The record gives the reactivity of an RNA of 177 nucleotides to DMS and 2A3. The RNA was probed in 150 mM KOAc, 10 mM MgCl2 and 150 mM bicine (pH 8.5) at 24 C. 2A3 adducts were read by reverse transcription with SuperScript II with manganese. For 2A3, 5,933 sequencing reads were counted. The data come from the RNA Mapping Database (RMDB), library TTRDES.
RNA sequence: GGGAACGACUCGAGUAGAGUCGAAAAGAUAUGGAGCAUCCAUCCUUCGACGAAGCUCCUCGGAAACGAGGAGCAGAGAAGCGAUGGAGUGCUCCUAAGUCAAACUCUGUUACUUCGGUAACAGAGACUGCAUAGAACAGUUCGCUGUUCUAUGCAGAAAAGAAACAACAACAACAAC
Reactivity to DMS in 0.01 (KOAc 150mM, MgCl2 10mM, bicine 150mM(pH8.5), 24C), signal-to-noise 4, nucleotides 027 to 126: g020a060u000a300u010g000g000a010g020c010a100u000c000c000a010u000c010c000u000u000c000g010a190c300g000a150a130g010c010u000c000c010u020c000g020g010a090a090a210c010g010a000g000g010a010g040c000a000g000a080g010a020a000g040c300g020a010u000g000g000a010g000u000g010c000u000c000c000u000a010a060g020u000c020a140a090a300c000u000c000u000g000u000u000a010c000u010u030c280g000g010u010a000a020c000a000g000a000g020a080
Reactivity to 2A3 in 0.01 (KOAc 150mM, MgCl2 10mM, bicine 150mM(pH8.5), 24C), signal-to-noise 3, nucleotides 027 to 126: g030a000u100a040u200g000g010a000g010c000a000u000c000c010a000u000c010c050u070u020c070g300a300c030g020a090a000g020c000u000c020c000u000c000g020g000a120a070a060c020g000a000g020g000a000g010c000a000g000a000g010a000a030g080c250g020a000u000g020g000a000g010u010g010c000u000c000c000u000a060a010g020u000c040a000a010a190c000u000c010u000g010u000u000a010c010u020u100c300g180g000u000a010a000c010a010g000a000g000a040